[RMDB]
RNA sequence: GGGAACGACUCGAGUAGAGUCGAAAAUCCUCACGUUUCGACGUGAGGAGAACUCUAGCAAGGGAAGGGAACCCUCGCGAAGGGCUCCCAAGGCGAUCUCAACAAGGGCCAAAUUCGUUUGGCCCAACCCAUAACGGACAUUCGUGUCCGUUAUGGGAAAAGAAACAACAACAACAAC
Reactivity to 2A3 in 0.01 (KOAc 150mM, MgCl2 10mM, bicine 150mM(pH8.5), 24C), signal-to-noise 1, nucleotides 027 to 126: u010c000c000u020c010a000c010g010u030u080u100c160g100a000c010g000u000g000a000g000g000a010g010a020a010c010u010c040u030a030g150c030a080a060g090g030g060a020a090g010g040g000a050a030c000c060c000u010c020g280c010g160a190a010g000g010g000c010u000c010c000c000a020a010g030g000c020g030a070u010c010u000c030a000a190c070a070a190g000g000g000c010c000a030a010a000u110u120c220g050u050u000u010g000g000c050c000c000a000a010
Reactivity to DMS in 0.01 (KOAc 150mM, MgCl2 10mM, bicine 150mM(pH8.5), 24C), signal-to-noise 1, nucleotides 027 to 126: u010c000c000u000c000a000c000g030u000u000u000c170g040a020c030g020u030g000a000g000g010a020g000a050a060c010u000c000u000a140g020c050a040a200g000g000g000a140a160g000g000g000a010a020c010c000c000u000c050g010c200g020a210a080g000g000g010c020u000c010c020c000a050a000g020g030c050g010a020u000c050u000c040a020a090c300a110a080g000g010g020c000c000a000a010a060u000u010c170g010u000u000u020g000g000c000c030c000a010a030